Notes: Source: RMDB library OK1LIB, as collected in RNAgym. The record gives the reactivity of an RNA of 177 nucleotides to 2A3 and DMS. The RNA was probed in 150 mM KOAc, 10 mM MgCl2 and 150 mM bicine (pH 8.5) at 24 C.
RNA sequence: GGGAACGACUCGAGUAGAGUCGAAAACAGUGAUGGAAACAUCACUGAAAAACGUGUGAGCGCUGCACGAAAAAGUCGAUCGAAUACCGAUCGACAAGCGCUAAAGUCAUGCCGAAAGGCAUGACAAAUAAUAGGGAGCGUUCGCGCUCCCUAUUAUAAAAGAAACAACAACAACAAC
Reactivity to 2A3 in 0.01 (KOAc 150mM, MgCl2 10mM, bicine 150mM(pH8.5), 24C), signal-to-noise 2, nucleotides 027 to 126: c000a000g000u020g010a000u020g010g040a040a000a010c000a000u000c010a000c000u010g000a070a000a000a000a000c010g000u000g000u010g080a050g000c000g020c000u000g020c000a000c040g210a190a070a020a000a000g000u000c000g000a000u000c010g000a030a040u100a300c090c010g000a010u000c000g000a000c020a000a000g000c010g000c000u000a010a000a000g000u000c000a000u000g000c000c000g060a030a010a030g000g000c010a000u000g000a000c000a000a030
Reactivity to DMS in 0.01 (KOAc 150mM, MgCl2 10mM, bicine 150mM(pH8.5), 24C), signal-to-noise 2, nucleotides 027 to 126: c000a000g000u000g000a000u000g000g000a260a080a130c000a000u000c000a000c000u010g000a030a110a080a160a170c040g000u000g020u000g020a030g010c020g000c020u000g000c000a000c010g000a040a060a060a080a010g000u000c020g020a000u000c000g010a300a100u020a160c170c020g000a000u000c000g030a000c000a000a000g020c000g020c010u000a070a100a100g000u010c000a000u000g030c000c000g000a090a100a190g010g060c000a000u020g000a000c010a010a040
Description
2A3 adducts were read by reverse transcription with SuperScript II with manganese. DMS (dimethyl sulfate) methylates the pairing face of unpaired adenines and cytosines. For 2A3, 2,343 sequencing reads were counted.